[RMDB]
RNA sequence: GGGAACGACUCGAGUAGAGUCGAAAAUGGACGUCUGUCCUCCUUCGGAUGCCCAGGUCGGACCGCGGGGAGGUGGAGAUGCCAUGCCGACCCGAAGAGGAAAGAAGGACUCGGACGCGAACCCGUACAACACGUGUCUUCGGACACGUGAAAAGAAACAACAACAACAAC
Reactivity to DMS in 0.01 (KOAc 150mM, MgCl2 10mM, bicine 150mM(pH8.5), 24C), signal-to-noise 5, nucleotides 027 to 129: u040g010g040a130c050g000u060c130u000g040u020c040c060u000c040c040u010u020c040g010g040a160u000g030c010c000c000a120g030g030u030c020g040g040a010c000c090g010c070g090g040g030g000a050g010g060u030g000g000a140g000a010u000g000c060c060a000u040g030c110c040g010a080c010c040c040g030a070a090g050a060g030g000a050a090a030g020a090a030g070g000a090c000u000c120g000g000a060c060g020c070g040a050a110c010c010c000g030u030a110c080a060a070
Reactivity to 2A3 in 0.01 (KOAc 150mM, MgCl2 10mM, bicine 150mM(pH8.5), 24C), signal-to-noise 7, nucleotides 027 to 129: u070g010g030a030c030g050u070c090u110g050u030c010c010u030c000c000u040u030c020g080g040a100u220g040c010c000c000a040g050g020u070c040g010g020a050c010c030g000c050g050g030g020g000a030g020g020u060g010g040a110g020a040u150g030c030c010a040u090g010c020c020g050a050c010c000c030g020a080a040g030a050g030g040a050a040a020g030a000a000g010g000a010c000u010c030g000g000a010c020g000c010g020a050a050c000c000c010g060u120a040c040a130a010